[RMDB]
RNA sequence: GGGAACGACUCGAGUAGAGUCGAAAAGCGAGUGCGUCCGCGAACACGGCGCCACCGAGAUCGAACGGGCAGUGGACCUGCUCGAACCGGAGGGGAUCGUUCACUGCGUGGUCCUCACGGACCGCGACAGCGCAACCUUGUUCGCAAGGUUGCGCUGAAAAGAAACAACAACAACAAC
Reactivity to 2A3 in 0.01 (KOAc 150mM, MgCl2 10mM, bicine 150mM(pH8.5), 24C), signal-to-noise 1, nucleotides 027 to 126: g060c020g020a020g080u070g030c030g100u070c040c000g070c040g030a050a020c080a030c060g000g060c020g090c000c000a010c040c070g060a090g010a090u110c030g030a070a040c020g030g000g000c010a000g020u240g080g130a130c010c020u010g000c000u000c000g020a020a030c040c020g000g030a070g070g000g000g000a090u020c030g020u020u020c040a080c160u050g000c020g000u020g000g020u030c000c010u040c000a060c110g000g020a010c020c010g000c000g020a020
Reactivity to DMS in 0.01 (KOAc 150mM, MgCl2 10mM, bicine 150mM(pH8.5), 24C), signal-to-noise 2, nucleotides 027 to 126: g020c080g000a070g000u030g000c050g000u000c030c010g010c000g000a040a100c210a260c020g000g000c000g010c050c060a090c040c030g000a050g000a040u000c020g030a060a210c030g000g000g000c010a060g000u010g010g010a270c060c010u000g000c010u000c010g010a000a130c030c040g000g000a230g000g000g000g000a110u000c060g020u000u000c030a070c030u000g000c030g020u000g010g000u010c000c000u000c300a110c300g000g000a000c000c010g030c000g000a110